[RMDB]
Structure probing data (2A3) for a 207-nucleotide construct. Conditions: 150 mM KOAc, 10 mM MgCl2 and 150 mM bicine (pH 8.5), 24 C. The 2A3 profile rests on 422 reads.
RNA sequence: GGGAACGACUCGAGUAGAGUCGAAAACGAAGCAGACCGCAUCGCAUGGCGACAGCAAUGGGUCGACAACGUCCACGAGCGGACGAAAGUCGCAGAGGAAACCCGCACCGCGCCCGGGACCAUCUACUACCUGCAGGUAGAGAACCUCAUCAAGAUCGCGGACUUACCAAUUCGUUGGUAAGUCCGCAAAAGAAACAACAACAACAAC
Reactivity to 2A3 in 0.01 (KOAc 150mM, MgCl2 10mM, bicine 150mM(pH8.5), 24C), signal-to-noise 1, nucleotides 027 to 156: c020g050a050a040g120c050a020g020a040c030c000g050c090a000u020c020g030c010a080u050g000g000c020g000a050c020a000g060c010a000a200u120g000g000g030u080c010g000a040c050a190a020c000g000u000c000c000a060c120g210a020g080c130g030g000a020c000g080a070a120a010g050u020c000g000c070a050g030a010g000g050a050a070a060c070c010c000g000c050a070c090c120g080c020g050c050c000c000g000g020g010a070c040c000a060u050c030u140a200c010u020a080c000c080u050g080c080a100g030g000u000a020g000a000g000a060a020c000c020u070c050a070u000c040a120a000g080a140u140c120

Source: RMDB library OK3TST, as collected in RNAgym.